[RMDB]
RNA sequence: GGGAACGACUCGAGUAGAGUCGAAAAGUCCUCCCGUCUCGGCCACUCUUCCGAUGUUGAGAAGGAGCUUGCAGGCAUUGCCAGCAAGAUGGCAUCCAAGGGAAAGGGUCUUCUGGCAGUUGAUGAGGAGCUGUUAAAGGUUCGCCUUUAACAGCUCAAAAGAAACAACAACAACAAC
Reactivity to DMS in 0.01 (KOAc 150mM, MgCl2 10mM, bicine 150mM(pH8.5), 24C), signal-to-noise 2, nucleotides 027 to 126: g030u000c060c060u000c010c030c010g020u010c020u000c070g020g020c030c050a160c050u000c040u000u000c040c060g010a050u010g010u010u010g000a070g010a090a120g000g010a190g010c050u000u000g020c040a080g000g000c050a180u000u010g010c010c000a030g030c060a020a030g000a090u010g010g010c030a060u000c020c060a120a120g030g000g020a010a070a090g000g000g000u010c030u000u000c070u010g010g000c000a070g010u000u000g030a090u000g000a150g000
Reactivity to 2A3 in 0.01 (KOAc 150mM, MgCl2 10mM, bicine 150mM(pH8.5), 24C), signal-to-noise 1, nucleotides 027 to 126: g040u000c010c010u100c000c010c000g080u000c080u050c000g050g020c000c000a140c020u130c070u010u050c000c040g040a050u170g120u160u110g050a240g030a080a080g060g010a060g030c020u050u030g000c050a030g050g000c060a140u000u300g000c010c010a010g030c040a040a010g050a040u040g060g040c000a030u000c010c040a140a110g030g000g060a060a080a080g100g030g000u010c000u050u000c030u070g040g060c020a050g070u120u060g080a110u060g040a060g210